[RMDB]
RNA sequence: GGGAACGACUCGAGUAGAGUCGAAAAGAGAUACUAUGGCCAAGGCAAUUGCUAUAAGGAAAACAUUUCAUUGGUACUGAUUUACAGUUUCAGAAGUAGUCCGCUAUCAUCAUAGCAGAAAGCAUGGCAGCAUGUCGGUACACAUGGUGCUGAAGAAGCAGUCGUCAUUAUUCGUAAUGACGACUGCAAAAGAAACAACAACAACAAC
Reactivity to 2A3 in 0.01 (KOAc 150mM, MgCl2 10mM, bicine 150mM(pH8.5), 24C), signal-to-noise 2, nucleotides 027 to 156: g090a000g030a030u090a100c040u080a060u140g070g000c000c040a030a050g060g020c000a030a090u050u030g010c030u030a020u100a150a150g070g000a060a030a080a110c080a090u070u150u120c060a080u070u060g010g030u020a040c010u000g030a130u050u110u120a040c050a020g000u000u060u140c020a020g010a160a020g030u100a030g030u000c000c010g010c030u040a040u080c070a010u030c040a000u080a010g010c060a010g100a020a040a040g020c020a010u070g060g000c000a000g020c000a000u030g020u050c060g040g090u060a000c070a000c010a060u040g190g000u040g030c010u060g020a050a010g100a040a020
Notes:
An RNA of 207 nucleotides, treated with 2A3 and read out base by base. 2A3 adducts were read by reverse transcription with SuperScript II with manganese. Source: RMDB library OK3TST, as collected in RNAgym.